[RMDB]
RNA sequence: GGGAACGACUCGAGUAGAGUCGAAAAGAUAUGGAGGCCUUAUACCUCAUCAUACUGGAGCUACUGGGAUCGGAAACGAUCCCUGUAGCGAUGAAGGUAUGAGUGAGGUAUAAGGCCUCCUAAGUCACAAUUAUGUUAUGUUCGCAUAACAUAAUUGAAAAGAAACAACAACAACAAC
Reactivity to DMS in 0.01 (KOAc 150mM, MgCl2 10mM, bicine 150mM(pH8.5), 24C), signal-to-noise 4, nucleotides 027 to 126: g010a050u000a300u010g000g000a020g030g020c000c010u000u000a010u000a010c000c010u000c000a050u010c000a000u000a000c000u000g000g000a040g020c000u000a000c000u000g010g010g010a020u000c000g020g010a100a110a240c010g010a000u000c000c000c000u000g000u000a000g010c000g000a030u020g010a180a220g000g010u000a000u000g000a040g010u000g010a000g000g000u000a000u000a000a000g010g010c000c000u000c000c000u000a000a050g000u000c030a300